[RMDB]
RNA sequence: GGGAACGACUCGAGUAGAGUCGAAAACUCGCGACCCCAUGGAGGCGUGGGGAGCGACAUGAAUCAGCCUCGAUUAGAUGUGGUCGACCGUACCGCGGCGUACAGCGACCUAGUUAGAAGCCGCAAAACCGGAAGAGAUGACGCUCGACGGACGUCAGACGUGCUAAUGAUUCGUCAUUAGCACGUCAAAAGAAACAACAACAACAAC
Reactivity to 2A3 in 0.01 (KOAc 150mM, MgCl2 10mM, bicine 150mM(pH8.5), 24C), signal-to-noise 3, nucleotides 027 to 156: c020u010c000g000c010g000a300c020c000c000c040a010u050g110g010a000g000g000c010g000u000g000g000g000g000a000g000c000g030a010c020a080u240g120a170a100u200c070a050g030c000c000u010c030g050a140u120u190a120g140a200u160g100u070g090g050u000c000g000a210c040c040g030u000a020c020c060g000c010g020g000c020g020u010a030c020a010g020c000g000a040c000c030u000a000g030u020u020a100g000a090a000g000c000c000g000c000a000a020a020a060c090c050g050g050a190a030g060a020g010a030u110g020a030c020g030c060u020c070g040a050c040g050g000a050c040g010u010c010a000
Reactivity to DMS in 0.01 (KOAc 150mM, MgCl2 10mM, bicine 150mM(pH8.5), 24C), signal-to-noise 1, nucleotides 027 to 156: c030u000c000g000c020g000a200c000c000c000c000a030u000g000g010a130g020g000c000g040u000g000g000g000g000a300g020c020g040a140c060a060u000g050a170a090u000c030a110g050c000c060u000c050g030a080u020u000a110g040a110u000g010u000g030g050u000c000g010a110c030c000g090u000a030c000c020g030c100g000g000c020g020u000a000c000a060g020c000g000a050c010c000u000a070g050u000u000a160g020a040a070g000c000c020g000c050a070a060a070a030c120c040g000g020a030a060g030a210g000a240u000g000a060c030g020c050u010c030g000a130c040g030g000a050c020g000u010c070a070